RNA sequence: GGGAACGACUCGAGUAGAGUCGAAAAGCCAUGUGACUUUUGUCGCAUGGCGACGACGGAGUUUUCUCCGUCGGAUAUCUGCCAUCCGUUAGCCCGGGAUGGCCUAUCUGCCGAACAUGCUUUUUAGCUUGUGAGGUAGUUAGUGCUUGGGGCGUCAAGCCUAAUAUUACUUCGGUAAUAUUAGGCUAAAAGAAACAACAACAACAAC
Reactivity to 2A3 in 0.01 (KOAc 150mM, MgCl2 10mM, bicine 150mM(pH8.5), 24C), signal-to-noise 8, nucleotides 027 to 156: g010c000c000a000u010g000u000g000a000c030u070u100u300u300g010u010c000g010c000a000u000g000g000c000g000a000c000g000a000c000g030g020a010g000u090u120u270u220c010u000c010c000g000u000c000g000g020a060u060a070u040c080u060g000c000c000a000u000c010c000g040u030u080a020g000c000c000c000g000g000g000a000u000g000g000c000c000u000a000u000c000u000g000c000c000g020a010a010c000a010u020g000c000u070u130u080u180u300a010g000c010u010u020g000u000g000a020g010g010u000a000g000u000u000a000g000u020g030c020u140u160g020g000g000g010c010g010u030c080a040
Reactivity to DMS in 0.01 (KOAc 150mM, MgCl2 10mM, bicine 150mM(pH8.5), 24C), signal-to-noise 3, nucleotides 027 to 156: g040c010c000a000u000g010u000g010a020c000u000u000u000u000g040u000c000g000c000a010u010g020g000c020g010a010c000g010a020c010g030g010a040g020u000u010u010u000c010u010c000c000g020u010c000g000g000a100u000a050u000c080u010g020c000c010a040u000c000c010g000u000u010a140g030c020c010c000g030g000g010a040u000g010g020c000c000u000a010u000c010u000g000c010c000g000a300a040c010a030u000g010c000u000u000u010u010u010a050g020c010u000u000g000u000g010a300g030g020u000a020g010u000u000a010g020u010g020c060u010u000g030g020g020g030c040g020u000c090a120
Description: Chemical mapping of a 207-nucleotide RNA with 2A3 and DMS. DMS adducts were read by reverse transcription with MarathonRT. 2A3 adducts were read by reverse transcription with SuperScript II with manganese.